About this RNA
The data come from the RNA Mapping Database (RMDB), library OK2TST. This 177-nucleotide RNA was probed chemically with 2A3 and DMS. The RNA was probed in 150 mM KOAc, 10 mM MgCl2 and 150 mM bicine (pH 8.5) at 24 C. For 2A3, 1,174 sequencing reads were counted.
RNA sequence: GGGAACGACUCGAGUAGAGUCGAAAACGAGAGCUUCACUCAAGUGCCAAGCGAUGGCUUCCCCUUCGCGGUCGGGGUCGGGGGCUAAGUAGAUAUCCGAGGCGUUGGCAACGGCAUUUUUCAGCUCCUUCAAUCUAGGGUUCGCCCUAGAUUGAAGAAAAGAAACAACAACAACAAC
Reactivity to 2A3 in 0.01 (KOAc 150mM, MgCl2 10mM, bicine 150mM(pH8.5), 24C), signal-to-noise 1, nucleotides 027 to 126: c010g030a010g000a020g120c000u080u100c120a040c070u140c090a070a010g040u020g070c000c000a010a050g020c060g090a060u140g040g060c060u010u050c020c000c000c020u050u050c010g050c040g040g070u050c010g000g010g000g040u010c020g000g000g020g030g040c010u010a080a020g030u040a040g050a030u080a060u150c040c040g010a090g020g070c060g070u050u090g030g000c000a030a020c050g030g010c050a060u070u020u000u080u090c020a000g020c000u050c030
Reactivity to DMS in 0.01 (KOAc 150mM, MgCl2 10mM, bicine 150mM(pH8.5), 24C), signal-to-noise 2, nucleotides 027 to 126: c070g020a150g020a060g010c050u000u010c150a210c030u020c100a080a110g030u010g010c020c020a100a190g020c080g000a070u000g010g010c060u020u000c020c020c000c160u000u010c090g040c060g010g010u020c020g020g000g020g030u000c050g010g000g010g020g010c070u010a000a080g050u020a060g020a090u000a100u010c020c000g000a110g000g010c090g020u000u000g000g020c010a050a080c130g020g000c090a040u020u010u000u000u000c060a090g020c070u000c070